[RMDB]
This 177-nucleotide RNA was probed chemically with 2A3. Conditions: 150 mM KOAc, 10 mM MgCl2 and 150 mM bicine (pH 8.5), 24 C. Values cover nucleotides 27 to 126. Source: RMDB library RFM100, as collected in RNAgym.
RNA sequence: GGGAACGACUCGAGUAGAGUCGAAAAUUGCUCGGCAACGGCCUGGUCUGUGCCAAGUGUUUGCUGACGCAACCCCCACUGGCUGGGGCUUGGCCAUAGGCCAUCAGCGCAUGCGUGGAACCUUUGUACUCAUCCAGGGAUUCGUCCCUGGAUGAGUAAAAGAAACAACAACAACAAC
Reactivity to 2A3 in 0.01 (KOAc 150mM, MgCl2 10mM, bicine 150mM(pH8.5), 24C), signal-to-noise 2, nucleotides 027 to 126: u070u110g020c000u020c030g060g000c000a030a050c080g230g000c030c070u020g020g020u020c010u070g060u160g030c000c000a040a020g060u080g030u150u020u010g010c020u100g070a110c170g000c020a020a050c000c000c020c030c000a010c080u080g210g000c040u000g000g000g020g000c000u050u020g030g000c080c060a050u060a000g030g000c030c040a020u020c010a020g010c020g050c110a080u100g000c030g040u060g040g000a030a050c000c000u030u010u010g200u030